About this RNA:
This 177-nucleotide RNA was probed chemically with DMS and 2A3. 2A3 adducts were read by reverse transcription with SuperScript II with manganese. DMS adducts were read by reverse transcription with MarathonRT. Source: RMDB library OK2TST, as collected in RNAgym.
RNA sequence: GGGAACGACUCGAGUAGAGUCGAAAAUGAUUGCCCUAGCAGGCUCCUGUGAUCUCAGUGACCUCCUUGUGGGGCAGAGGUCCUAGGCCUUCAGCUGUUACAGAGGACAGUAGUGCGUCUUCAGCCAAAUCGUCAUUUAGUUCGCUAAAUGACGAUUAAAAGAAACAACAACAACAAC
Reactivity to DMS in 0.01 (KOAc 150mM, MgCl2 10mM, bicine 150mM(pH8.5), 24C), signal-to-noise 6, nucleotides 027 to 126: u010g010a080u010u010g020c010c020c020u010a100g050c180a050g000g010c010u010c030c190u000g000u010g010a020u000c010u000c010a200g010u010g000a180c140c000u000c010c030u010u010g030u020g010g000g000g010c040a080g010a010g000g000u000c000c010u000a050g000g010c050c010u000u000c060a130g010c020u000g010u010u000a180c140a160g010a110g000g010a030c020a060g000u000a100g010u000g020c180g000u000c040u000u000c050a130g010c060c090a050
Reactivity to 2A3 in 0.01 (KOAc 150mM, MgCl2 10mM, bicine 150mM(pH8.5), 24C), signal-to-noise 5, nucleotides 027 to 126: u120g010a060u060u300g040c020c010c010u010a040g010c030a010g050g000c080u210c220c070u110g080u190g060a040u020c000u000c020a190g200u150g260a300c010c000u060c010c030u240u280g110u300g060g000g000g030c010a010g000a000g000g010u000c000c000u010a000g030g000c000c000u050u070c020a010g010c010u000g040u050u020a120c100a100g060a050g100g050a020c010a030g070u140a020g040u040g090c020g020u040c040u080u060c020a010g070c010c000a030